[RMDB]
RNA sequence: GGGAACGACUCGAGUAGAGUCGAAAAUUACAGCUCAAGCUGCAGAGGCCGAGGUGAAAGGUAACACCAAGAAAGCUGAACAGCUUCGUGCUCAAGCACAACAGUGGCAAGAAUGGGCCGAUGCCGCGGGAUCAUAUUCUUUCGAGAAUAUGAUCCCAAAAGAAACAACAACAACAAC
Reactivity to 2A3 in 0.01 (KOAc 150mM, MgCl2 10mM, bicine 150mM(pH8.5), 24C), signal-to-noise 2, nucleotides 027 to 126: u110u050a070c050a030g000c000u030c030a060a000g000c010u060g090c170a000g030a040g130g000c000c020g010a040g050g020u050g110a170a060a010g160g050u170a210a010c000a000c020c020a000a030g130a080a070a000g010c020u020g010a020a020c020a000g000c020u000u020c020g010u020g010c010u020c070a070a100g090c030a020c000a140a050c010a040g020u040g000g000c040a020a040g070a090a070u070g030g000g030c020c000g040a030u090g020c020c040g000c050
Reactivity to DMS in 0.01 (KOAc 150mM, MgCl2 10mM, bicine 150mM(pH8.5), 24C), signal-to-noise 3, nucleotides 027 to 126: u030u010a120c210a090g040c000u000c040a070a060g010c000u000g020c070a040g050a300g000g010c040c040g010a210g000g020u010g000a070a070a110g020g020u020a180a120c030a050c000c000a100a080g010a050a090a030g000c020u000g000a210a140c030a050g010c010u000u010c150g000u010g020c020u000c180a060a090g000c080a030c060a100a090c070a050g000u000g000g020c020a020a080g010a090a140u000g000g010g000c010c050g000a060u000g000c020c050g030c120

Source: RMDB library OK2TST, as collected in RNAgym. Chemical mapping of a 177-nucleotide RNA with 2A3 and DMS. The RNA was probed in 150 mM KOAc, 10 mM MgCl2 and 150 mM bicine (pH 8.5) at 24 C. High 2A3 reactivity points to a flexible backbone, as in loops and unpaired stretches. For DMS, 1,746 sequencing reads were counted. For 2A3 the reverse transcriptase was SuperScript II with manganese.